[RMDB]
An RNA of 207 nucleotides, treated with 2A3 and read out base by base.
Values cover nucleotides 27 to 156.
RNA sequence: GGGAACGACUCGAGUAGAGUCGAAAAGAGGAGUUCGCUCCUCAAAAAAGCGUACUACAAAGGAGGUGUCGGGACGCGAAACCUACCUCCCAAAUAGGAGGUAGGGAGUCCCACACUACCCACCCUUUGUAUCGCAAAAAAGAAGCUUCGGCUUCAACGCAUUAAUGAACUUCGGUUCAUUAAUGCGAAAAGAAACAACAACAACAAC
Reactivity to 2A3 in 0.01 (KOAc 150mM, MgCl2 10mM, bicine 150mM(pH8.5), 24C), signal-to-noise 2, nucleotides 027 to 156: g000a000g000g000a010g020u080u140c210g110c080u010c000c040u030c020a120a040a000a000a000a000g050c040g010u090a080c050u000a000c030a000a000a000g010g020a030g010g000u070g020u090c180g020g010g010a000c000g030c110g120a060a050a020c000c000u010a000c010c010u090c040c000c030a230a300a080u300a110g000g000a010g000g000u000a000g000g000g010a000g000u000c000c030c000a000c000a000c000u010a010c020c010c000a050c010c010c010u020u010u000g020u010a030u180c040g000c000a060a030a020a020a030a060g020a000a000g000c000u040u130c190g120g000c000u000u040c060a010a010
It was measured as part of the RMDB library RNAMAK. The reactions ran in a buffer of 150 mM KOAc, 10 mM MgCl2 and 150 mM bicine (pH 8.5), at 24 C.